RNA sequence: GGGAACGACUCGAGUAGAGUCGAAAAUUUGCUCUGUCACCCAGGCUGGAGUGCAAUGGUGCAAUCUCGGCUCACUGAAACCUCCACUUACUGGGUUCAAGUGAUUCUCCUGCCUCAGCCUCCUGAGCGAUCAUACGGUGUUCGCACCGUAUGAUCGAAAAGAAACAACAACAACAAC
Reactivity to DMS in 0.01 (KOAc 150mM, MgCl2 10mM, bicine 150mM(pH8.5), 24C), signal-to-noise 2, nucleotides 027 to 126: u020u040u030g010c000u000c020u000g020u000c160a160c020c010c040a060g030g000c160u000g000g000a010g000u030g000c020a040a080u030g000g030u000g010c130a080a050u050c160u020c070g000g000c000u000c000a130c030u010g020a070a220a120c030c030u010c050c030a060c180u040u000a150c100u040g000g000g000u010u000c080a080a030g000u000g010a120u000u010c090u000c010c000u000g000c000c000u030c000a040g000c070c010u000c010c010u020g000a050g030
Reactivity to 2A3 in 0.01 (KOAc 150mM, MgCl2 10mM, bicine 150mM(pH8.5), 24C), signal-to-noise 5, nucleotides 027 to 126: u080u050u110g020c010u030c030u020g110u110c050a040c000c020c000a020g040g010c040u010g070g080a050g010u210g030c050a060a120u190g050g010u050g050c060a110a100u050c070u020c120g050g020c000u010c020a050c040u040g030a070a050a060c010c020u090c040c030a050c090u170u280a100c060u050g030g020g000u000u030c030a060a010g010u010g060a030u030u040c010u000c020c010u040g020c000c010u020c010a010g040c010c020u050c020c030u060g040a050g060

An RNA of 177 nucleotides, treated with DMS and 2A3 and read out base by base. 2A3 adducts were read by reverse transcription with SuperScript II with manganese. Source: RMDB library OK1LIB, as collected in RNAgym.